[RMDB]
RNA sequence: GGGAACGACUCGAGUAGAGUCGAAAACAUGAACGUCCCGUCGCCGGUAUCCGGUUUAUCUCACAUCUUUCAGUCAGGAGGUUCUUAUGAGUGCACGUGGUAUCAACAAGGUCAUCCUCGUCGGGCGAUUAGAAACCUCAUUCGUGAGGUUUCUAAUAAAAGAAACAACAACAACAAC
Reactivity to DMS in 0.01 (KOAc 150mM, MgCl2 10mM, bicine 150mM(pH8.5), 24C), signal-to-noise 4, nucleotides 027 to 126: c070a130u000g010a080a190c090g010u000c020c020c020g010u000c070g010c050c040g000g000u010a060u010c050c010g010g000u000u000u010a040u010c040u000c050a100c120a070u000c030u000u000u010c050a100g020u000c090a080g010g000a100g000g000u000u010c070u000u000a060u010g020a080g020u010g020c130a050c060g020u010g010g010u000a040u000c060a060a090c100a070a110g010g010u010c080a120u000c030c020u000c050g010u000c040g010g000g020c110g000
Reactivity to 2A3 in 0.01 (KOAc 150mM, MgCl2 10mM, bicine 150mM(pH8.5), 24C), signal-to-noise 2, nucleotides 027 to 126: c030a130u130g070a080a010c010g100u080c040c030c000g030u050c030g000c020c020g040g010u140a100u050c020c010g040g000u040u090u030a060u020c030u030c010a080c000a140u010c030u030u150u090c030a060g040u030c010a030g000g060a030g070g030u110u020c020u030u150a100u140g020a030g050u040g040c050a010c110g050u010g060g000u030a050u080c020a010a070c010a090a050g060g020u040c010a040u080c000c000u020c000g030u000c010g030g010g010c010g020